Source: RMDB library 15KREP, as collected in RNAgym. An RNA of 177 nucleotides, treated with 2A3 and read out base by base.

[RMDB]
RNA sequence: GGGAACGACUCGAGUAGAGUCGAAAAAUGUCACUUGUAUUAGUCAUUGUAGUGAAGAGAUUGUACAACCCAUCACUUUCUAACUUUGCGUUAGCAUUGUGCAGUGGUGUAAUGUGGUUGUACACUUCCCCUUUGAGUAGUUCGCUACUCAAAGGGGAAAAGAAACAACAACAACAAC
Reactivity to 2A3 in 0.01 (KOAc 150mM, MgCl2 10mM, bicine 150mM(pH8.5), 24C), signal-to-noise 2, nucleotides 027 to 126: a000u100g070u030c010a000c030u060u100g050u100a080u100u130a120g080u080c040a040u070u080g080u100a040g010u010g010a040a010g020a010g030a150u190u000g000u040a000c010a000a000c000c010c010a000u010c000a020c000u130u220u150c010u010a000a090c010u000u000u010g010c030g150u180u090a010g010c000a010u000u000g030u050g000c050a000g010u010g030g070u010g020u070a060a100u040g060u140g000g010u030u020g000u000a000c020a000c000u020u010
Values cover nucleotides 27 to 126.